[RMDB]
RNA sequence: GGGAACGACUCGAGUAGAGUCGAAAACGGUUACGCCUUCUUUACCGUGAUCAAGGAAGGUACUCGGCCAUGCUAAGGGAAGCAUUAUUCCUUAGGCGCAUGUCGCCGCCAGCAUGGUGUGAGGGGAAAAAGUAUGCUGGGUUCGCCCAGCAUACAACUGAUGAAACUAGUUCGCUAGUUUCAUCAGAAAAGAAACAACAACAACAAC
Reactivity to DMS in 0.01 (KOAc 150mM, MgCl2 10mM, bicine 150mM(pH8.5), 24C), signal-to-noise 4, nucleotides 027 to 156: c040g000g000u010u000a030c040g000c000c010u000u000c000u000u000u010a040c010c010g020u010g000a070u000c090a040a030g020g030a050a020g020g030u000a040c010u000c010g010g000c010c000a030u000g020c010u000a180a140g020g000g010a040a040g010c190a210u010u010a160u010u000c010c000u000u000a110g020g010c020g030c040a110u000g020u000c060g040c010c010g020c090c090a050g020c020a020u000g000g010u000g000u000g010a030g000g010g010g000a050a070a100a150a150g010u000a010u000g000c000u000g010g000g040u000u000c300g020c000c010c000a020g000c000a000u000a000c010a060a110
Reactivity to 2A3 in 0.01 (KOAc 150mM, MgCl2 10mM, bicine 150mM(pH8.5), 24C), signal-to-noise 9, nucleotides 027 to 156: c010g000g020u040u030a030c070g010c000c000u010u010c010u020u040u050a030c030c050g180u120g090a060u080c070a010a000g030g000a000a000g000g010u040a050c010u010c000g020g000c000c000a000u000g000c010u050a060a070g010g000g010a020a010g020c100a210u120u110a150u190u080c010c010u030u070a060g010g000c010g000c040a160u260g100u300c010g010c040c000g030c030c020a000g000c000a000u010g020g020u070g140u150g030a040g030g020g020g080a030a100a010a020a030g000u000a000u000g000c000u000g010g010g020u020u040c100g090c010c000c000a000g000c000a000u000a000c000a000a010